[RMDB]
RNA sequence: GGGAACGACUCGAGUAGAGUCGAAAAGAAAGAAAGAAAUAAAUCUGACAGAAUGACGGAUUCGAUCGUUGUGGUCGGCGGGCCACCACGUCAUUCCUUCGCACUGUCUCCGGGCAGACCGCCAUAAAAAAGCGGAUCUACUUCGGUAGAUCCGCAAUCAUCAAUCCUGGUUCGCCAGGAUUGAUGAAAAAGAAACAACAACAACAAC
Reactivity to 2A3 in 0.01 (KOAc 150mM, MgCl2 10mM, bicine 150mM(pH8.5), 24C), signal-to-noise 2, nucleotides 027 to 156: g050a020a050a000g110a050a070a040g110a010a130a000u200a020a130a010u060c070u090g020a000c020a060g150a170a240u140g010a040c040g000g050a030u030u190c130g050a100u240c040g010u010u080g000u000g030g000u040c040g060g120c030g030g020g000c000c020a000c020c010a000c000g000u000c000a020u010u010c000c000u030u020c030g000c010a040c020u000g010u010c010u000c080c040g010g010g000c010a000g010a100c020c040g000c000c030a040u220a010a130a020a010a010a000g000c000g000g000a000u000c000u000a010c000u010u010c130g100g000u000a000g000a000u000c000c000g000c010a000a010